[RMDB]
RNA sequence: GGGAACGACUCGAGUAGAGUCGAAAAAGCAUGAACAUAACUCGUUAAAUACUGUUUAAAACAAAUAGUUGCAAAUAAUUACAACUAUAGUUUGGCAGCUUAAUGCCAACCUGUUAUCAUUUGUGGCCUACAACAUUUGAUAACGGUCAUUUUAGUACUAACAGCUAAGGUUCGCCUUAGCUGUUAGAAAAGAAACAACAACAACAAC
Reactivity to 2A3 in 0.01 (KOAc 150mM, MgCl2 10mM, bicine 150mM(pH8.5), 24C), signal-to-noise 4, nucleotides 027 to 156: a000g100c070a080u130g070a120a040c030a070u220a120a090c050u040c150g070u090u080a090a100a040u120a170c070u050g030u050u120u100a120a190a040a030c040a020a150a040u010a010g010u020u020g010c030a000a110a130u190a100a130u290u180a080c000a010a010c020u040a000u020a070g010u000u030u030g020g000c000a010g010c030u080u140a060a010u090g000c010c000a010a000c010c000u010g000u000u000a000u010c000a000u000u010u010g020u010g080g100c040c030u110a070c070a170a000c000a020u010u000u020g010a000u000a000a000c000g010g030u020c000a020u060u130u050u060a030g020u000a050
Reactivity to DMS in 0.01 (KOAc 150mM, MgCl2 10mM, bicine 150mM(pH8.5), 24C), signal-to-noise 2, nucleotides 027 to 156: a060g000c060a110u020g000a110a110c070a090u010a070a050c050u000c050g010u000u000a020a040a050u000a030c030u000g000u000u000u000a090a000a040a060c020a040a140a110u000a020g020u000u020g030c010a020a090a220u000a170a150u000u000a010c020a010a020c000u000a010u010a220g010u000u000u000g000g000c000a020g020c040u000u010a020a050u010g000c040c040a050a030c060c000u020g040u000u000a020u000c000a020u000u010u000g000u000g010g020c160c150u010a150c040a090a020c040a010u000u000u010g000a020u010a000a010c030g000g000u010c030a060u000u010u010u010a090g020u000a120